[RMDB]
RNA sequence: GGGAACGACUCGAGUAGAGUCGAAAAUUAGCUACUCUAUGGACAGAAGCCCGCUGGCGUGAUCUACCUCACCGGAUACGUCCCUUACCUGAUAGCAUACAGCAAGCUGUAUGGCGGCUAAAUCGCAACUUUUUCGUGAAUUCGUUCACGAAAAAGUAAAAGAAACAACAACAACAAC
Reactivity to DMS in 0.01 (KOAc 150mM, MgCl2 10mM, bicine 150mM(pH8.5), 24C), signal-to-noise 2, nucleotides 027 to 126: u010u000a110g000c030u000a050c050u000c010u000a130u000g000g000a090c060a060g010a140a160g010c060c020c040g000c070u000g000g010c070g020u010g010a080u000c060u000a120c050c000u000c070a030c060c030g020g010a080u010a050c110g010u000c010c010c080u000u000a060c090c040u020g000a120u000a090g000c040a030u010a010c050a030g020c070a040a130g050c010u000g020u000a020u010g010g000c040g020g020c100u010a030a060a120u000c080g010c070a090
Reactivity to 2A3 in 0.01 (KOAc 150mM, MgCl2 10mM, bicine 150mM(pH8.5), 24C), signal-to-noise 1, nucleotides 027 to 126: u100u020a030g020c020u020a070c010u010c020u040a120u150g050g020a030c000a030g090a140a030g010c000c000c060g000c080u050g010g000c020g010u030g010a070u000c000u030a050c010c000u030c010a020c050c000g010g000a030u030a050c020g030u030c070c020c000u050u070a190c030c010u100g050a130u110a120g000c020a000u040a040c010a020g060c060a090a230g060c010u030g020u010a010u040g090g020c010g000g000c040u040a040a050a050u140c050g030c030a030